[RMDB]
RNA sequence: GGGAACGACUCGAGUAGAGUCGAAAAGCGUGGAGAGAGGGCCGCGGUGCUCUGGAGUAGAGGCUCUGCCUUCGAAACACCAUCGAUCGUCCCUUCUUCUUUACCUUCUUCUGGCUCUUCCGAUGAGACGCGACCGGUGGCAUCACCUCUCGGUUCGGUAUAACCUCUUCUUCGGAAGAGGUUAUACAAAAGAAACAACAACAACAAC
Reactivity to DMS in 0.01 (KOAc 150mM, MgCl2 10mM, bicine 150mM(pH8.5), 24C), signal-to-noise 1, nucleotides 027 to 156: g000c120g010u000g010g000a070g010a170g020a060g050g030g050c100c020g060c010g040g030u000g020c030u010c000u000g020g020a190g060u010a170g030a170g000g020c020u010c160u060g000c040c010u000u000c020g020a200a240a300c040a030c120c030a050u000c000g000a080u000c020g000u000c040c010c000u000u000c000u000u000c020u010u010u010a050c000c020u000u000c050u010u010c020u020g030g000c000u010c030u000u010c070c000g030a090u000g030a100g030a100c050g040c030g000a240c020c000g010g000u010g000g000c140a200u010c060a090c050c030u000c020u000c020g020g040u000u000c030g030
Reactivity to 2A3 in 0.01 (KOAc 150mM, MgCl2 10mM, bicine 150mM(pH8.5), 24C), signal-to-noise 6, nucleotides 027 to 156: g090c100g010u010g020g000a010g000a000g000a000g010g000g000c020c000g040c010g010g000u010g000c010u010c000u020g010g000a000g000u000a000g000a010g010g000c050u100c220u300g060c060c010u170u170c010g010a020a010a010c000a020c160c000a010u010c010g100a300u040c010g020u010c000c000c000u050u020c010u020u000c000u000u010u010a000c000c000u040u040c070u080u000c050u120g010g000c000u000c000u030u010c010c010g060a090u100g030a030g030a040c040g010c020g040a020c000c000g010g020u020g000g030c090a130u080c040a080c020c000u010c030u080c030g040g010u130u080c040g030

Overview: An RNA of 207 nucleotides, treated with DMS and 2A3 and read out base by base. The data come from the RNA Mapping Database (RMDB), library VIROID. For 2A3 the reverse transcriptase was SuperScript II with manganese. Conditions: 150 mM KOAc, 10 mM MgCl2 and 150 mM bicine (pH 8.5), 24 C. The 2A3 profile rests on 8,352 reads.